[RMDB]
RNA sequence: GGGAACGACUCGAGUAGAGUCGAAAAACAUUGUCCCAUUCAGGUACGAUGUAAUGAUAGUUAGUGUUAAACCAUUUUAUAAGUGCACUUGCAACAUGGUCUUUAUUACCGCGAGCAAUAUCAAAUACAAAGGGGUUCUUUUCGAAGAACCCCUUUGAAAAGAAACAACAACAACAAC
Reactivity to DMS in 0.01 (KOAc 150mM, MgCl2 10mM, bicine 150mM(pH8.5), 24C), signal-to-noise 3, nucleotides 027 to 126: a070c060a040u010u000g000u000c040c010c020a300u030u010c270a060g010g030u020a040c050g030a020u010g000u030a070a100u020g010a020u020a040g000u010u010a060g020u000g020u010u000a060a100a070c030c020a100u030u000u030u020a080u030a090a050g010u010g010c080a100c070u000u000g000c050a070a050c170a070u010g010g000u000c100u020u010u010a060u030u020a030c000c000g000c030g000a120g060c050a060a020u030a040u000c030a010a050a100u010a120
Reactivity to 2A3 in 0.01 (KOAc 150mM, MgCl2 10mM, bicine 150mM(pH8.5), 24C), signal-to-noise 1, nucleotides 027 to 126: a010c000a090u030u000g010u010c000c000c050a040u270u210c010a050g060g000u000a000c000g000a050u000g070u150a060a060u210g050a040u000a040g300u070u030a000g000u000g000u010u110a000a200a030c030c040a110u000u030u030u010a210u040a050a050g040u000g020c000a110c110u030u020g000c000a040a010c000a140u080g030g010u050c020u180u240u160a300u250u040a000c010c000g000c000g050a000g000c120a090a050u110a000u300c010a000a010a010u240a090

Chemical mapping of a 177-nucleotide RNA with DMS and 2A3.
For DMS the reverse transcriptase was MarathonRT.
The reactions ran in a buffer of 150 mM KOAc, 10 mM MgCl2 and 150 mM bicine (pH 8.5), at 24 C.
High DMS reactivity at an A or C suggests that its Watson-Crick edge is free.